[RMDB]
RNA sequence: GGGAACGACUCGAGUAGAGUCGAAAACCGUUGCCGUUCGCGGCAACGGGAAGCAAGCAAGCAGCGCAACGAGACAAGACGAUAAUGACAUCGCGCAUGCUGAAAAGCCACGCUUCGGCGUGGCUAAAUCUCUACAAUAAUUCGUUAUUGUAGAGAUAAAAGAAACAACAACAACAAC
Reactivity to DMS in 0.01 (KOAc 150mM, MgCl2 10mM, bicine 150mM(pH8.5), 24C), signal-to-noise 3, nucleotides 027 to 126: c010c000g010u000u000g020c000c000g020u000u020c260g040c030g020g000c000a000a000c000g000g000g000a050a070g000c150a080a090g010c150a150a050g010c010a040g010c010g010c040a120a100c110g000a160g000a100c110a100a060g000a060c080g000a070u010a070a120u000g010a100c120a090u000c070g010c020g050c010a060u010g010c020u000g000a030a060a080a050g010c000c000a040c000g010c010u000u010c140g020g020c010g010u010g000g000c000u000a000a050
Reactivity to 2A3 in 0.01 (KOAc 150mM, MgCl2 10mM, bicine 150mM(pH8.5), 24C), signal-to-noise 2, nucleotides 027 to 126: c010c000g010u000u000g000c000c000g020u040u030c210g000c020g100g030c000a000a000c020g000g020g020a020a020g070c100a070a000g020c010a050a000g000c030a000g030c000g000c010a040a040c050g090a020g060a180c060a130a050g130a050c070g070a070u100a170a140u210g030a030c040a120u050c030g000c010g000c040a080u060g000c010u010g000a090a130a000a000g000c060c010a040c000g000c000u040u050c140g070g000c000g010u040g000g040c000u010a000a050
Structure probing data (DMS and 2A3) for a 177-nucleotide construct. The data come from the RNA Mapping Database (RMDB), library M2PK50. DMS adducts were read by reverse transcription with MarathonRT. The RNA was probed in 150 mM KOAc, 10 mM MgCl2 and 150 mM bicine (pH 8.5) at 24 C. 2A3 adducts were read by reverse transcription with SuperScript II with manganese. For 2A3, 2,723 sequencing reads were counted.